The record gives the reactivity of an RNA of 207 nucleotides to 2A3 and DMS.
The reactions ran in a buffer of 150 mM KOAc, 10 mM MgCl2 and 150 mM bicine (pH 8.5), at 24 C.
For 2A3, 2,067 sequencing reads were counted.
The DMS profile rests on 6,006 reads.
For DMS the reverse transcriptase was MarathonRT.
RNA sequence: GGGAACGACUCGAGUAGAGUCGAAAAAUGCAUAAUUGGCUUAUAUUUAUGUCAUUGUUGCUGUACGAUUCCUACAGCUGUAUAAUACCUAAGAACUUUACUUAUUCACCAUCUCUUUUUUCCUCUGCCAUAGGUUGAGCUCUGUUAACCUUGAAUAAUUUUACUAAAUGUUCGCAUUUAGUAAAAUAAAAGAAACAACAACAACAAC
Reactivity to 2A3 in 0.01 (KOAc 150mM, MgCl2 10mM, bicine 150mM(pH8.5), 24C), signal-to-noise 4, nucleotides 027 to 156: a000u030g010c010a020u020a050a070u100u050g080g010c050u210u070a100u080a090u300u150u030a080u090g080u090c030a020u030u070g070u120u100g000c000u000g010u040a020c050g090a150u050u090c010c010u020a020c000a000g000c010u030g060u070a100u040a090a160u120a120c010c060u030a080a060g030a140a080c010u120u140u130a090c010u120u140a060u150u090c020a050c050c010a110u070c040u000c030u060u130u050u030u070u070c000c020u020c030u040g040c010c010a080u050a050g040g000u000u030g020a020g020c020u010c010u060g030u050u040a050a070c010c000u060u080g050a030a030u240a060
Reactivity to DMS in 0.01 (KOAc 150mM, MgCl2 10mM, bicine 150mM(pH8.5), 24C), signal-to-noise 2, nucleotides 027 to 156: a100u000g010c050a060u000a080a100u000u010g020g010c020u020u020a130u010a110u010u000u000a040u000g010u000c040a080u000u000g010u000u010g010c010u000g040u000a080c080g010a260u010u010c030c010u000a100c110a010g010c040u020g020u000a070u010a060a130u000a070c020c020u010a110a100g010a060a070c050u000u010u000a060c050u000u000a090u010u010c020a060c050c020a070u000c030u000c000u000u000u000u000u000u000c000c010u000c040u000g010c020c050a130u000a040g020g020u000u000g010a090g000c030u000c050u000g000u000u000a040a080c050c030u000u000g000a090a100u010a070